Chemical mapping of a 207-nucleotide RNA with DMS and 2A3. The RNA was probed in 150 mM KOAc, 10 mM MgCl2 and 150 mM bicine (pH 8.5) at 24 C. The 2A3 profile rests on 6,361 reads. The DMS profile rests on 21,345 reads. For 2A3 the reverse transcriptase was SuperScript II with manganese.

[RMDB]
RNA sequence: GGGAACGACUCGAGUAGAGUCGAAAAGGAGGAUUCCGCUCCUUUGCGCUUUUUUUUCGGAUUAGGCGUGAAGGCGAAAGUCACCCUCCUCGCAUCGCAAGUUCGUGCUUGCGACUUACACGUAGGGAAAAACCCAUUGACUUCGGUCAAUGGGUAAUCGAUAAGUUUAGUUCGCUAAACUUAUCGAAAAAGAAACAACAACAACAAC
Reactivity to DMS in 0.01 (KOAc 150mM, MgCl2 10mM, bicine 150mM(pH8.5), 24C), signal-to-noise 4, nucleotides 027 to 156: g020g020a050g030g000a250u000u010c020c020g020c050u000c010c010u000u000u000g010c010g010c010u000u000u000u000u000u000u000u000c280g020g000a050u000u000a010g020g020c000g050u000g000a000a010g010g010c100g000a030a030a050g000u000c090a090c050c010c000u000c000c010u000c030g040c240a100u010c010g000c010a020a010g000u000u000c270g020u000g020c000u010u000g010c000g010a010c050u000u000a140c070a050c040g000u000a050g000g000g000a050a030a050a080a100c010c010c000a010u000u000g010a030c010u000u000c300g050g020u000c000a000a000u000g010g000g030u000a000a000
Reactivity to 2A3 in 0.01 (KOAc 150mM, MgCl2 10mM, bicine 150mM(pH8.5), 24C), signal-to-noise 6, nucleotides 027 to 156: g020g000a010g020g020a050u110u020c070c020g000c120u070c000c010u000u000u000g000c010g000c050u050u020u010u000u010u000u040u080c230g100g010a040u040u040a030g000g000c000g000u020g000a000a000g010g010c040g050a140a060a020g060u090c040a080c030c010c000u000c000c020u010c040g080c030a040u010c000g010c000a010a000g010u190u290c130g170u300g110c000u000u000g000c000g000a000c010u060u140a050c100a030c160g130u150a090g000g030g040a020a070a010a050a040c000c000c000a000u000u000g000a000c000u010u050c190g080g000u010c000a000a000u040g000g000g000u000a000a000